[RMDB]
RNA sequence: GGGAACGACUCGAGUAGAGUCGAAAAGGCAUGGUGGCAGGCACCUGUAAUCCCAGCUGCUUGGGAGACUGAGACAGGAGAAUUGCUUGAACCCAGGAGGCGAAGGUUGUAACGAACUGAAAUCGUGCAACCCGUCCUUGUUCGCAAGGACGGGUUGAAAAGAAACAACAACAACAAC
Reactivity to DMS in 0.01 (KOAc 150mM, MgCl2 10mM, bicine 150mM(pH8.5), 24C), signal-to-noise 2, nucleotides 027 to 126: g010g020c040a050u000g010g040u020g000g030c050a040g030g020c050a050c030c030u000g000u020a120a090u000c000c010c000a100g060c150u000g010c070u010u000g000g030g000a030g010a110c210u000g000a110g000a030c020a030g020g020a140g000a100a070u020u000g010c030u000u010g000a060a100c080c030c020a070g000g020a070g030g020c000g000a100a080g010g000u000u000g010u020a080a070c050g020a060a070c140u020g000a070a050a120u000c010g010u020g000